[RMDB]
RNA sequence: GGGAACGACUCGAGUAGAGUCGAAAAGAUAUGGAUCGCGGGAGCUCUCAUAUCGGAAACGAUAUACGCGAGAGCGAAGAACGUCGAUCCUAAGUCAAAGUGAUGAGGCGUUCGCGCCUCAUCACAAGAUUGGAGUCUACUUCGGUAGACUCCAAUCAAAAGAAACAACAACAACAAC
Reactivity to 2A3 in 0.01 (KOAc 150mM, MgCl2 10mM, bicine 150mM(pH8.5), 24C), signal-to-noise 1, nucleotides 027 to 126: g000a020u040a010u160g020g010a000u030c010g000c010g000g020g000a050g060c030u000c000u010c020a000u000a010u020c000g030g030a050a080a020c020g000a000u020a000u040a140c300g050c140g180a010g070a000g000c060g030a070a090g030a050a020c110g110u300c060g160a010u000c000c000u010a130a000g010u050c080a160a050a030g050u000g000a000u000g000a000g000g020c040g070u110u210c300g050c000g000c230c000u000c000a000u000c000a010c000a000a000
Reactivity to DMS in 0.01 (KOAc 150mM, MgCl2 10mM, bicine 150mM(pH8.5), 24C), signal-to-noise 1, nucleotides 027 to 126: g030a040u000a300u000g000g000a010u000c000g030c010g010g010g030a220g000c010u010c000u020c000a090u000a000u010c000g000g010a060a150a100c000g000a000u000a040u010a060c150g000c180g000a000g010a060g010c020g000a070a110g000a080a150c000g000u000c040g010a000u000c000c000u000a010a040g000u000c060a150a110a130g000u000g000a000u010g020a030g010g010c000g000u000u020c160g050c000g010c000c000u000c010a000u000c000a020c010a010a030